[RMDB]
RNA sequence: GGGAACGACUCGAGUAGAGUCGAAAAGCCGAGGCGCUCACUGCCGUUGACCGUGAAAUGAGCUCGAUGCGAUCUGUCAAGUCGGUGGCGGUACCGCUUCGGUGACACCACCGCAUCGACCGCAUACUCUUGCUUGCUUCUUCGGAAGCAAGCAAGAAAAAGAAACAACAACAACAAC
Reactivity to DMS in 0.01 (KOAc 150mM, MgCl2 10mM, bicine 150mM(pH8.5), 24C), signal-to-noise 1, nucleotides 027 to 126: g050c000c000g000a100g030g000c060g030c300u000c060a000c060u000g060c020c080g000u000u000g000a000c180c170g000u000g000a120a110a120u000g050a250g000c040u000c220g020a110u030g000c030g000a060u000c120u000g000u000c100a110a180g000u010c010g000g000u000g000g000c000g000g000u000a020c300c000g000c300u070u030c020g000g020u000g000a080c140a090c020c030a100c110c000g000c000a010u000c030g000a010c020c030g020c090a080u000a160c080
Reactivity to 2A3 in 0.01 (KOAc 150mM, MgCl2 10mM, bicine 150mM(pH8.5), 24C), signal-to-noise 2, nucleotides 027 to 126: g000c000c030g010a000g000g020c010g000c020u080c050a100c070u090g000c000c000g010u010u040g090a020c000c070g090u090g060a070a070a100u120g020a020g020c020u010c100g070a050u180g010c000g040a120u010c040u060g110u190c040a090a050g060u070c000g040g000u010g000g000c000g020g000u020a040c010c000g000c010u020u060c030g010g020u000g000a000c000a020c000c000a020c000c000g000c000a040u020c030g050a040c010c020g020c050a070u060a140c020

Background: An RNA of 177 nucleotides, treated with DMS and 2A3 and read out base by base. The RNA was probed in 150 mM KOAc, 10 mM MgCl2 and 150 mM bicine (pH 8.5) at 24 C. For DMS, 1,194 sequencing reads were counted.